[RMDB]
RNA sequence: GGGAACGACUCGAGUAGAGUCGAAAAACGACCUGCGAACUUUGUCGCCUAGCGUAACGCCGUGGCGAGAUUUGGCUCGAUUGUUCGCAGUGGCGUUACGCUCGCCACGCGUGAGCCUGGAUCAGGCAGACUUAACCGUAUUCGUACGGUUAAGUCUAAAAGAAACAACAACAACAAC
Reactivity to DMS in 0.01 (KOAc 150mM, MgCl2 10mM, bicine 150mM(pH8.5), 24C), signal-to-noise 6, nucleotides 027 to 126: a100c070g000a100c050c020u010g000c030g000a050a050c100u010u000u010g010u000c040g020c060c030u010a080g020c050g010u000a060a040c060g030c010c020g020u010g000g010c010g000a020g000a040u000u000u010g010g010c050u010c050g000a040u010u000g010u010u000c010g010c000a040g000u010g000g000c010g010u000u000a030c080g010c010u000c100g010c020c040a040c140g000c060g020u010g010a140g010c010c020u000g000g000a140u010c080a040g010g030c080
Reactivity to 2A3 in 0.01 (KOAc 150mM, MgCl2 10mM, bicine 150mM(pH8.5), 24C), signal-to-noise 5, nucleotides 027 to 126: a000c020g040a050c010c010u020g010c020g030a060a060c040u140u110u170g080u070c020g020c020c030u030a020g020c010g070u050a050a030c020g000c010c040g060u060g010g000c020g010a010g000a020u060u060u130g110g010c050u060c090g070a060u040u150g060u120u040c020g000c020a010g000u030g040g030c000g020u030u020a030c020g000c010u010c010g000c010c010a050c040g040c030g030u040g060a010g010c010c020u070g080g050a180u220c080a020g010g030c010